This 207-nucleotide RNA was probed chemically with DMS and 2A3. The DMS profile rests on 2,603 reads.

RNA sequence: GGGAACGACUCGAGUAGAGUCGAAAAUCCACUAUGAAUCUAGUCACUAAAUAAACACAAUUAGCUACUGUGUUUAAUAGUGAGUGUUGAUAACACAAAAUAAUAGUAUAGUUUUGGAAGAUUAUACGCGCCCUUGCUCCGUUCGCGGAGCAAGGAAGCAUUGACUUAUGUUCGCAUAAGUCAAUGCAAAAGAAACAACAACAACAAC
Reactivity to DMS in 0.01 (KOAc 150mM, MgCl2 10mM, bicine 150mM(pH8.5), 24C), signal-to-noise 2, nucleotides 027 to 156: u000c000c000a080c090u000a100u000g010a150a110u000c080u000a180g010u010c000a020c000u000a070a100a270u000a050a010a040c030a010c000a020a040u000u000a220g040c250u010a070c020u010g060u010g000u000u000u000a010a300u000a040g020u010g010a100g030u010g010u000u000g010a110u010a080a160c030a120c030a060a050a040a060u000a110a300u000a050g010u020a080u000a030g010u000u000u000u000g020g000a160a180g020a040u000u000a040u000a010c000g000c130g030c090c010c000u010u000g010c000u000c000c010g020u010u020c280g030c040g050g000a000g030c000a020a000g010g000a020a080
Reactivity to 2A3 in 0.01 (KOAc 150mM, MgCl2 10mM, bicine 150mM(pH8.5), 24C), signal-to-noise 7, nucleotides 027 to 156: u010c010c010a040c060u170a160u250g120a110a060u070c110u090a050g110u040c010a000c010u020a020a070a300u100a020a030a010c000a010c000a020a080u140u080a080g070c050u160a050c050u020g000u000g000u000u000u000a020a040u010a000g010u010g000a010g000u020g010u030u060g090a130u240a300a020c040a000c030a040a140a070a020u220a070a060u080a110g010u010a010u010a030g010u010u020u100u160g100g040a090a070g010a060u030u010a010u040a030c030g030c000g060c050c000c000u000u000g000c000u000c000c010g020u040u040c180g000c010g100g000a000g000c000a000a000g000g000a000a000